Description: This 177-nucleotide RNA was probed chemically with DMS and 2A3. For 2A3 the reverse transcriptase was SuperScript II with manganese. The reactions ran in a buffer of 150 mM KOAc, 10 mM MgCl2 and 150 mM bicine (pH 8.5), at 24 C. Values cover nucleotides 27 to 126. The data come from the RNA Mapping Database (RMDB), library OK2TST.
[RMDB]
RNA sequence: GGGAACGACUCGAGUAGAGUCGAAAAUGACGUGCUGGACUACGAUAACCUUCAAGCAAAACAAGUUCAUAACCAUAUUGUUCUUUCAUAAUUUUAAAGACCAUAAGCAAACGCUGCUUAUAGCGUACCACUGAUAGUAUUUCGAUACUAUCAGUGGAAAAGAAACAACAACAACAAC
Reactivity to DMS in 0.01 (KOAc 150mM, MgCl2 10mM, bicine 150mM(pH8.5), 24C), signal-to-noise 7, nucleotides 027 to 126: u000g020a100c080g010u000g020c050u000g010g000a070c090u000a060c100g010a110u010a100a110c070c040u000u000c090a070a080g010c070a050a060a080a080c130a060a070g000u000u000c040a050u000a090a130c040c050a090u010a100u010u000g010u000u000c040u000u000u000c090a070u020a070a080u010u000u010u000a030a060a090g010a070c040c040a030u000a070a020g000c030a030a070a060c120g010c060u000g000c050u000u010a050u000a030g010c030g010u000a250
Reactivity to 2A3 in 0.01 (KOAc 150mM, MgCl2 10mM, bicine 150mM(pH8.5), 24C), signal-to-noise 9, nucleotides 027 to 126: u060g030a010c040g020u030g020c020u040g010g040a050c040u070a030c110g090a080u060a100a070c010c000u040u080c070a070a040g010c020a010a030a020a130c040a070a030g010u060u050c020a030u060a090a060c020c010a020u060a100u120u090g030u050u020c020u030u060u020c050a120u100a300a270u130u130u080u180a060a080a010g030a030c010c000a030u040a100a000g000c020a050a160a030c040g010c040u020g000c040u160u100a080u100a070g010c010g000u010a050